[RMDB]
RNA sequence: GGGAACGACUCGAGUAGAGUCGAAAAGGGCCGAAAGUGUGAAGGGAGAGACCGCUCCGAGAGUUGGGAGAAGAAAGAGAGCGAAUGUGUCCGGAGGGAACCCCCAAGCUUUCAACAGAGGAAGAGAAGACCUACAGGUUCGCCUGUAGGAAAAGAAACAACAACAACAAC
Reactivity to DMS in 0.01 (KOAc 150mM, MgCl2 10mM, bicine 150mM(pH8.5), 24C), signal-to-noise 9, nucleotides 027 to 129: g010g000g010c040c040g000a050a070a070g050u050g040u000g030a050a060g020g040g000a040g020a080g000a100c140c140g040c050u050c040c040g020a060g030a000g000u030u020g010g010g000a050g020a060a040g030a030a030a050g020a030g000a070g000c040g030a080a060u050g000u050g030u000c050c040g040g040a060g010g010g010a070a100c050c030c010c000c030a070a110g030c020u020u060u020c110a040a080c160a100g020a030g020g040a010a030g020a090g030a080a070g030a130
Reactivity to 2A3 in 0.01 (KOAc 150mM, MgCl2 10mM, bicine 150mM(pH8.5), 24C), signal-to-noise 9, nucleotides 027 to 129: g020g010g010c020c020g070a080a070a050g130u130g030u060g110a050a040g030g000g000a030g010a010g030a040c010c050g050c030u020c040c040g040a050g000a010g060u110u090g030g000g020a050g000a040a010g040a000a070a000g060a000g000a000g000c040g030a090a040u130g060u050g040u050c020c020g010g000a030g010g010g010a030a030c000c000c000c000c010a040a030g040c040u090u210u120c040a060a060c020a050g050a030g050g010a020a000g010a000g010a050a010g030a050